[RMDB]
RNA sequence: GGGAACGACUCGAGUAGAGUCGAAAAGCGAUGGCGUGCCUUUUGUUUAAUGAGUCUGCGAGUCAGUGUUUGUGGCAAGACUAAGGGCUUCCGGCCCGGAGUCGCAGCGAAAGCAAGUCCGAACAGGUUAUAACACCACCUUCGGGUGGUGUUAUAAAAAAGAAACAACAACAACAAC
Reactivity to 2A3 in 0.01 (KOAc 150mM, MgCl2 10mM, bicine 150mM(pH8.5), 24C), signal-to-noise 3, nucleotides 027 to 126: g060c050g100a100u150g050g020c040g010u010g040c000c010u070u140u050u060g190u060u100u090a190a100u190g010a000g050u020c020u010g020c050g020a020g030u030c020a040g050u070g120u120u130u090g150u130g040g000c060a120a030g000a020c010u040a040a050g000g000g050c000u130u150c080c100g030g000c010c000c000g000g000a030g020u000c020g050c020a000g020c000g030a050a010a000g040c020a030a000g000u000c010c000g000a040a010c020a020g000g080
Reactivity to DMS in 0.01 (KOAc 150mM, MgCl2 10mM, bicine 150mM(pH8.5), 24C), signal-to-noise 5, nucleotides 027 to 126: g010c070g010a060u000g010g000c040g020u010g000c030c010u000u000u010u000g000u000u000u020a100a110u010g010a090g010u020c010u000g020c010g010a090g010u020c030a090g010u010g010u000u000u010g020u020g020g010c030a120a100g000a020c020u010a180a130g000g000g000c010u020u040c280c150g010g010c000c010c000g000g030a080g000u010c010g000c180a130g000c020g010a070a070a080g000c030a070a090g010u000c020c010g010a070a070c120a080g000g030